Chemical mapping of a 207-nucleotide RNA with 2A3 and DMS. The DMS profile rests on 1,228 reads. DMS adducts were read by reverse transcription with MarathonRT. Reactivities are rounded to 0.1 and cut off at 0 and 3. The RNA was probed in 150 mM KOAc, 10 mM MgCl2 and 150 mM bicine (pH 8.5) at 24 C.
RNA sequence: GGGAACGACUCGAGUAGAGUCGAAAAAUAUAUCACUGAGAAGUGAUAUAUGAGUCAGCACGAGAGUGCUGACAGUCGAUGUCAGAGAGGUACGGACUCUGACGUGGACAACGAGAUGUACCGGAGUAGAUCGAGUUGUGCACACGGAACCGAUAACGUCUUCACGACUAUUCGUAGUCGUGAAGACAAAAGAAACAACAACAACAAC
Reactivity to 2A3 in 0.01 (KOAc 150mM, MgCl2 10mM, bicine 150mM(pH8.5), 24C), signal-to-noise 2, nucleotides 027 to 156: a000u010a000u010a000u010c000a000c010u040g040a020g020a140a060g040u010g000a000u000a000u000a000u010g030a030g000u010c000a000g000c000a000c030g080a070g000a000g020u000g000c000u000g000a000c000a010g010u080c100g100a090u060g000u020c010a010g000a000g010a040g090g120u140a070c030g030g030a030c000u000c000u000g010a030c010g010u020g010g030a000c000a000a010c030g000a000g000a040u010g040u170a020c000c160g210g010a150g000u080a050g040a080u000c010g010a010g030u000u050g010u060g040c000a040c020a030c030g050g030a070a070c060c000g010a090u070a160a070c070
Reactivity to DMS in 0.01 (KOAc 150mM, MgCl2 10mM, bicine 150mM(pH8.5), 24C), signal-to-noise 1, nucleotides 027 to 156: a010u010a010u000a000u000c000a050c000u000g020a300g000a290a130g030u000g020a010u000a000u000a000u000g000a270g000u010c000a000g010c000a010c000g050a300g050a300g010u000g090c000u000g010a010c000a020g000u000c000g000a110u000g090u000c000a010g000a020g000a080g060g000u010a260c170g000g070a300c020u000c000u040g060a030c000g080u000g010g000a050c000a050a090c130g100a300g030a110u000g080u010a070c000c110g000g050a300g010u000a200g000a040u000c030g000a300g000u000u000g070u000g170c040a070c040a260c060g000g000a090a110c090c000g000a140u010a050a120c130